[RMDB]
RNA sequence: GGGAACGACUCGAGUAGAGUCGAAAAGUAUUUUGGUCAAUUUUGUUUUCGUGAAUUAUUUGUUUUAUAUUUUCAUUAGGUGCGUCUCACUAAGAUGUACACACGUUCCAAAUUUUAGAUCAUUCCGCGAUGGGGAAACGUUCGCGUUUCCCCAUCGAAAAGAAACAACAACAACAAC
Reactivity to 2A3 in 0.01 (KOAc 150mM, MgCl2 10mM, bicine 150mM(pH8.5), 24C), signal-to-noise 2, nucleotides 027 to 126: g140u180a190u020u140u000u010g000g000u000c020a020a010u000u000u000u000g080u050u140u050u030c000g000u090g040a170a100u130u040a040u060u230u040g100u090u100u090u000a270u030a100u210u000u120u110c030a070u040u170a110g150g000u030g010c000g000u000c030u060c000a100c120u000a060a030g000a020u040g040u100a000c050a000c010a000c000g000u000u000c000c000a000a000a040u080u140u090u090a000g000a000u000c000a060u040u000c060c000g000